[RMDB]
Chemical mapping of a 177-nucleotide RNA with 2A3 and DMS. The data come from the RNA Mapping Database (RMDB), library RFM100. Reactivities are given for positions 27 through 126. 2A3 adducts were read by reverse transcription with SuperScript II with manganese. The RNA was probed in 150 mM KOAc, 10 mM MgCl2 and 150 mM bicine (pH 8.5) at 24 C.
RNA sequence: GGGAACGACUCGAGUAGAGUCGAAAAAGCAUGGGUAAAACCAUGUGGAGGACCGAACAGGUGAACGUUGAAAAGUUCUCUGAUGAGCUGAGGGUAGGAGUGAAAGGCUAAUCAAACCCCGUGAUAGGACGGGUUAAUUCUUCGGAAUUAACCCGUCAAAAGAAACAACAACAACAAC
Reactivity to 2A3 in 0.01 (KOAc 150mM, MgCl2 10mM, bicine 150mM(pH8.5), 24C), signal-to-noise 2, nucleotides 027 to 126: a000g040c000a000u000g000g000g000u010a010a060a020a010c000c000a000u010g000u020g030g020a050g000g000a010c070c090g070a060a050c030a030g020g050u050g050a030a010c050g030u130u120g140a130a060a000a010g000u000u000c000u000c000u030g090a120u130g050a020g030c050u010g060a030g000g030g010u040a080g000g040a030g040u030g040a160a020a000g030g000c020u070a020a020u050c020a020a050a140c000c000c000c000g050u060g030a120u100a150g080
Reactivity to DMS in 0.01 (KOAc 150mM, MgCl2 10mM, bicine 150mM(pH8.5), 24C), signal-to-noise 2, nucleotides 027 to 126: a140g020c000a000u010g020g010g000u000a100a070a140a170c010c000a000u000g000u000g000g000a140g000g010a300c030c020g000a030a160c180a040g000g040u030g010a100a090c060g030u010u040g040a050a090a060a140g040u000u000c030u000c000u000g000a060u040g000a100g020c140u020g000a040g000g000g030u020a040g000g000a060g010u000g010a120a030a230g000g040c050u000a120a050u000c120a080a040a140c020c000c000c020g000u020g000a160u040a160g000